Overview
This 207-nucleotide RNA was probed chemically with DMS and 2A3. Source: RMDB library RNAMAK, as collected in RNAgym.
RNA sequence: GGGAACGACUCGAGUAGAGUCGAAAAGGGGUCGAAACGACUCCGAGGAGCUAGAGGUGUACUGAAGCCUCCACGGUACACUACCCACCUAGCUCUACCCACCGGAGUCUUUGGUUUCGACGGAGGCACCCAAAAUCGCAGCUUUCGAGCUGCGAAACACAUCCAUUCUAUUCGUAGAAUGGAUGUGAAAAGAAACAACAACAACAAC
Reactivity to DMS in 0.01 (KOAc 150mM, MgCl2 10mM, bicine 150mM(pH8.5), 24C), signal-to-noise 2, nucleotides 027 to 156: g040g030g020g010u000c010g000a000a030a120c090g000a060c000u000c000c020g010a110g010g010a020g020c010u000a050g000a130g020g000u000g010u000a010c000u010g010a030a130g000c000c000u010c000c000a300c040g000g010u000a010c020a030c010u000a020c050c000c030a300c130c020u000a020g050c000u000c000u000a020c070c030c020a300c110c000g010g010a020g000u010c020u030u000u020g000g000u000u000u000c030g020a060c000g010g010a060g030g090c010a080c030c000c040a050a080a080a060u000c000g040c000a000g020c010u000u000u000c300g000a070g040c000u000g030c000g000a000a020a170
Reactivity to 2A3 in 0.01 (KOAc 150mM, MgCl2 10mM, bicine 150mM(pH8.5), 24C), signal-to-noise 3, nucleotides 027 to 156: g010g010g010g000u000c000g010a000a010a020c020g000a000c000u000c010c000g000a010g000g000a000g000c000u000a000g000a010g030g010u000g000u000a000c000u010g040a120a040g010c000c000u010c010c000a010c010g010g000u000a000c000a000c000u080a080c030c060c010a070c030c000u000a000g010c000u000c000u010a050c070c070c040a040c020c000g020g000a000g000u000c000u160u280u280g170g000u040u000u010c000g010a000c040g010g000a000g000g010c000a020c000c010c010a050a060a000a060u050c010g000c000a000g000c000u060u070u300c300g110a020g000c000u010g000c000g000a000a020a000

Background: Conditions: 150 mM KOAc, 10 mM MgCl2 and 150 mM bicine (pH 8.5), 24 C. 2A3 adducts were read by reverse transcription with SuperScript II with manganese.